The record gives the reactivity of an RNA of 177 nucleotides to DMS and 2A3. It was measured as part of the RMDB library OK1LIB.

RNA sequence: GGGAACGACUCGAGUAGAGUCGAAAACGUGUAAAUUGAACUCUUCUCAGCUUGACAUGCUCUUCAGGCAGUUGAGUGUGAUAAUGAAAAAGCGAAAUUUGCAAUUCGAAGUCGUCGGAAGCGGCAGAUGUCAAUCGCUAUUCGUAGCGAUUGACAUAAAAGAAACAACAACAACAAC
Reactivity to DMS in 0.01 (KOAc 150mM, MgCl2 10mM, bicine 150mM(pH8.5), 24C), signal-to-noise 2, nucleotides 027 to 126: c100g010u000g000u000a020a010a000u000u000g000a090a120c010u000c090u000u000c070u000c030a220g030c030u010u010g010a040c110a060u030g000c050u040c080u040u040c210a050g010g010c000a020g020u020u000g000a000g000u000g050u030g010a080u010a080a120u000g000a000a040a040a050a020g000c040g000a070a010a010u010u000u000g030c010a020a060u010u010c010g000a060a090g010u000c010g020u000c020g030g010a070a130g000c010g000g010c090a180g000
Reactivity to 2A3 in 0.01 (KOAc 150mM, MgCl2 10mM, bicine 150mM(pH8.5), 24C), signal-to-noise 5, nucleotides 027 to 126: c090g020u040g000u060a030a070a020u040u040g030a070a030c010u010c030u020u000c000u000c020a020g040c000u010u040g010a010c020a270u040g050c000u030c050u230u160c080a090g040g000c010a000g000u000u000g010a020g010u060g050u040g110a070u070a180a110u220g110a070a090a050a040a000g050c040g040a030a030a020u050u020u030g010c040a050a090u120u050c020g050a090a020g030u030c020g000u030c060g080g060a130a020g040c010g000g000c030a040g020
About this RNA: For DMS, 2,681 sequencing reads were counted. For 2A3, 3,540 sequencing reads were counted. The reactions ran in a buffer of 150 mM KOAc, 10 mM MgCl2 and 150 mM bicine (pH 8.5), at 24 C.